[RMDB]
RNA sequence: GGGAACGACUCGAGUAGAGUCGAAAACCGAAGAAGCAAACCGGAAAAGUGGCAGUUUUUCCGUGGAAACUGACAGGCAAAAAGGAAGGUCAUCGGACGAUACUUUGGAGAGACCACUUCAGUGUGGGAUUUAUAUCGCGUUCGCGCGAUAUAAAUCAAAAGAAACAACAACAACAAC
Reactivity to DMS in 0.01 (KOAc 150mM, MgCl2 10mM, bicine 150mM(pH8.5), 24C), signal-to-noise 2, nucleotides 027 to 126: c030c010g010a090a080g000a080a060g020c050a070a140a080c110c010g010g000a030a080a040a120g000u010g000g020c090a090g020u000u000u000u010u000c040c070g000u010g000g010a100a060a050c060u000g000a030c120a060g000g020c110a040a040a070a060a040g020g000a020a090g000g000u000c030a090u000c130g010g000a060c050g010a080u020a030c060u000u000u000g010g020a150g000a110g010a110c010c040a020c000u000u010c220a060g000u000g030u000g010g000
Reactivity to 2A3 in 0.01 (KOAc 150mM, MgCl2 10mM, bicine 150mM(pH8.5), 24C), signal-to-noise 1, nucleotides 027 to 126: c000c020g030a080a000g030a030a010g040c040a070a030a000c010c000g000g050a050a020a000a090g040u030g130g160c070a050g050u020u000u020u080u000c060c020g020u060g000g070a080a060a000c020u040g060a030c010a000g070g040c080a070a150a000a000a010g150g030a050a050g150g000u030c060a040u160c110g080g010a000c020g060a030u030a100c010u060u090u100g000g000a020g030a010g000a070c020c020a020c000u090u040c050a240g090u010g040u000g070g050